Annotation: An RNA of 177 nucleotides, treated with 2A3 and DMS and read out base by base. High 2A3 reactivity points to a flexible backbone, as in loops and unpaired stretches. Conditions: 150 mM KOAc, 10 mM MgCl2 and 150 mM bicine (pH 8.5), 24 C. For DMS, 973 sequencing reads were counted. 2A3 adducts were read by reverse transcription with SuperScript II with manganese.

RNA sequence: GGGAACGACUCGAGUAGAGUCGAAAACGGGUAUAGUUCGCUAUACCCGAAAGAAAGCACGAAUAAAUAAUGGGUAAAGAAUAAACGUGCACCCUAAUAAAAAAAUCUGCAGGUUCGCCUGCAGAAAGUGGUACAAUAAGUUCGCUUAUUGUACCACAAAAGAAACAACAACAACAAC
Reactivity to 2A3 in 0.01 (KOAc 150mM, MgCl2 10mM, bicine 150mM(pH8.5), 24C), signal-to-noise 2, nucleotides 027 to 126: c000g010g000g000u000a000u000a000g010u010u020c120g000c090u010a000u000a000c000c000c000g000a000a000a000g050a020a080a010g030c020a000c000g040a060a030u100a160a140a050u190a090a120u140g060g060g100u120a130a160a020g060a120a120u090a120a120a040c010g000u000g000c000a010c000c000c000u100a150a080u150a130a110a040a000a000a010a030u020c010u010g000c000a010g010g050u020u050c100g120c070c000u000g030c010a000g000a000a010a000
Reactivity to DMS in 0.01 (KOAc 150mM, MgCl2 10mM, bicine 150mM(pH8.5), 24C), signal-to-noise 1, nucleotides 027 to 126: c020g000g010g000u000a020u000a000g010u010u020c190g040c010u010a000u000a000c010c000c000g030a010a040a080g020a100a090a170g010c000a000c000g000a180a080u000a040a090a130u010a120a060u000g050g020g010u020a060a170a130g000a120a090u000a030a120a090c010g000u000g000c060a180c030c000c010u030a050a180u030a000a000a060a050a080a120a190u000c020u000g010c000a000g000g010u000u010c220g010c000c000u010g030c000a000g000a020a100a040